[RMDB]
RNA sequence: GGGAACGACUCGAGUAGAGUCGAAAAAAUACACUCGUUAGCUGCUUUUACUUUUUAUUGUAUGCAUAUAUUGCAGCAUUUACACAUACAGUAACUUUACGCUAUGUUUAUAAUGUAUCUAUUGGUGAAAAUAUUACAUUAUCUAAACCCGAUAACCACAUUGGCUCUCAUUCGUGAGAGCCAAUGUAAAAGAAACAACAACAACAAC
Reactivity to 2A3 in 0.01 (KOAc 150mM, MgCl2 10mM, bicine 150mM(pH8.5), 24C), signal-to-noise 1, nucleotides 027 to 156: a000a000u220a040c040a020c080u120c060g100u040u010a000g000c000u010g000c010u040u030u020u020a040c000u110u120u110u140u120a100u080u090g000u060a080u030g000c060a040u080a060u050a010u300u210g000c000a000g000c000a000u090u060u040a000c040a000c000a020u070a050c050a040g000u000a000a140c060u090u220u180a100c070g010c050u040a020u120g010u000u020u000a070u010a010a000u000g010u000a000u000c010u020a000u000u060g060g020u140g120a240a100a000a000u040a020u080u030a000c000a000u000u000a010u020c100u110a090a030a030c000c000c000g060a020u140a080a060c000c030
This 207-nucleotide RNA was probed chemically with 2A3. For 2A3, 438 sequencing reads were counted. Values cover nucleotides 27 to 156. The reactions ran in a buffer of 150 mM KOAc, 10 mM MgCl2 and 150 mM bicine (pH 8.5), at 24 C. Source: RMDB library OK3TST, as collected in RNAgym.